Chemical mapping of a 177-nucleotide RNA with DMS and 2A3. Values cover nucleotides 27 to 126. For 2A3 the reverse transcriptase was SuperScript II with manganese.
[RMDB]
RNA sequence: GGGAACGACUCGAGUAGAGUCGAAAAGAUAUGGAUCUGUCUGGAGCUCGUCGGUCGGAAACGACCGAUGAGCGUUGAAAGAGCAGAUCCUAAGUCAAACUUGAUAGGCGUUCGCGCCUAUCAAGAACUAUACACGAAUGUUCGCAUUCGUGUAUAGAAAAGAAACAACAACAACAAC
Reactivity to DMS in 0.01 (KOAc 150mM, MgCl2 10mM, bicine 150mM(pH8.5), 24C), signal-to-noise 5, nucleotides 027 to 126: g010a010u000a020u010g000g000a000u000c000u000g000u000c010u000g000g010a030g030c000u000c000g020u000c000g000g010u000c000g030g010a000a000a030c000g020a010c000c000g010a000u000g010a010g030c000g010u000u010g000a100a210a060g000a040g010c010a010g010a010u000c000c000u000a000a070g000u000c010a110a100a240c000u000u000g000a010u000a010g010g010c000g030u000u010c250g020c000g020c010c000u000a000u000c000a000a000g000a070a160
Reactivity to 2A3 in 0.01 (KOAc 150mM, MgCl2 10mM, bicine 150mM(pH8.5), 24C), signal-to-noise 2, nucleotides 027 to 126: g000a000u000a000u060g000g000a000u000c000u010g030u040c000u010g050g000a020g010c000u000c000g020u000c000g010g000u000c000g020g000a020a000a010c000g010a000c010c000g010a000u000g000a000g000c000g010u010u010g010a000a000a000g030a040g100c000a000g000a010u010c000c000u010a000a010g000u010c020a050a100a170c000u010u000g000a000u010a000g000g000c010g050u040u120c300g020c010g050c110c000u000a000u000c000a000a000g000a000a000